[RMDB]
RNA sequence: GGGAACGACUCGAGUAGAGUCGAAAACACGAAAGCUAAAAGUACAACCUAAGGAAGGAAGAGACUGGAAAUUAACAUUUGGGGUAGUGGAGCUCAGAAUUCCUCGCAGCGGCGUCUGUGUCGCAACCCGUGGACGCACGUCCUUGGACCAACACUGCACUUCAUUUAUGUUCGCAUAAAUGAAGUGAAAAGAAACAACAACAACAAC
Reactivity to 2A3 in 0.01 (KOAc 150mM, MgCl2 10mM, bicine 150mM(pH8.5), 24C), signal-to-noise 8, nucleotides 027 to 156: c090a010c060g050a060a020a020g030c040u090a080a030a020a020g040u050a050c030a060a090c050c040u130a080a060g030g010a010a020g020g020a010a030g040a010g020a040c040u050g040g050a050a100a080u100u070a120a030c030a090u050u070u160g030g000g000g000u040a050g030u040g040g020a020g010c010u010c040a020g040a070a050u080u020c010c000u020c040g030c070a050g010c010g040g000c010g040u080c090u100g090u050g020u040c020g010c050a030a040c020c000c010g030u040g020g000a010c020g010c090a050c090g040u030c010c000u020u050g040g010a040c040c010a040a020c050a030c070u070g000
Reactivity to DMS in 0.01 (KOAc 150mM, MgCl2 10mM, bicine 150mM(pH8.5), 24C), signal-to-noise 3, nucleotides 027 to 156: c020a080c090g010a050a040a120g010c030u010a030a080a040a090g000u010a100c040a050a100c090c060u000a090a130g000g020a110a060g020g000a160a100g000a080g020a080c080u010g020g000a060a030a120u000u000a050a060c060a120u000u010u000g010g020g040g050u010a050g000u000g010g020a100g030c060u000c040a070g010a130a130u000u000c020c010u000c040g040c060a090g000c050g020g020c050g010u000c050u020g040u000g020u000c020g030c080a050a050c030c030c010g000u000g010g020a050c030g020c080a010c050g000u000c030c020u010u000g020g020a030c040c010a050a060c030a070c060u000g000